Source: RMDB library OK3TST, as collected in RNAgym. This 207-nucleotide RNA was probed chemically with 2A3 and DMS. For 2A3 the reverse transcriptase was SuperScript II with manganese. Reactivities are rounded to 0.1 and cut off at 0 and 3. The reactions ran in a buffer of 150 mM KOAc, 10 mM MgCl2 and 150 mM bicine (pH 8.5), at 24 C.
RNA sequence: GGGAACGACUCGAGUAGAGUCGAAAAGAGGAGAAGGACGUUUCGCCGCAGACCGAGGACGUGAUGCUGAUCGUCCGUCCCGAGCAGUUCUACGUCUUGCAGCAGGCCGAGCAGAUCAUCAACGGUGAAUACCUCACCAGCGAUGGCAACAAGCUGAGUCCGCAUGAAAAUUCGUUUUCAUGCGGACAAAAGAAACAACAACAACAAC
Reactivity to 2A3 in 0.01 (KOAc 150mM, MgCl2 10mM, bicine 150mM(pH8.5), 24C), signal-to-noise 2, nucleotides 027 to 156: g080a010g040g020a050g020a140a010g050g010a010c060g040u030u060u090c070g020c010c010g000c070a030g030a050c030c030g020a150g020g010a020c020g050u160g010a040u050g030c110u070g040a060u130c020g030u060c050c010g000u030c000c000c000g010a060g000c040a010g000u060u080c040u070a030c020g020u040c000u010u050g040c000a020g000c010a020g010g030c020c000g000a040g010c030a020g040a160u070c000a000u010c000a030a030c020g000g000u020g010a020a020u120a250c040c010u000c000a000c000c010a000g000c010g010a000u010g020g000c000a000a070c040a020a050g000c010u020g020a010
Reactivity to DMS in 0.01 (KOAc 150mM, MgCl2 10mM, bicine 150mM(pH8.5), 24C), signal-to-noise 1, nucleotides 027 to 156: g000a130g000g010a090g000a110a040g000g000a020c070g040u000u000u000c050g040c070c010g000c090a080g050a200c050c050g000a120g010g020a000c030g000u000g000a090u010g000c060u010g010a070u000c050g010u000c000c090g000u000c050c150c000g010a130g060c020a090g000u000u010c050u000a060c030g040u000c040u000u010g000c030a050g000c010a030g000g000c050c010g000a070g040c020a090g000a150u000c090a050u000c080a070a300c030g040g000u000g000a030a240u000a100c200c120u040c000a030c010c000a090g000c280g020a090u000g010g000c100a100a070c030a050a150g000c010u010g000a220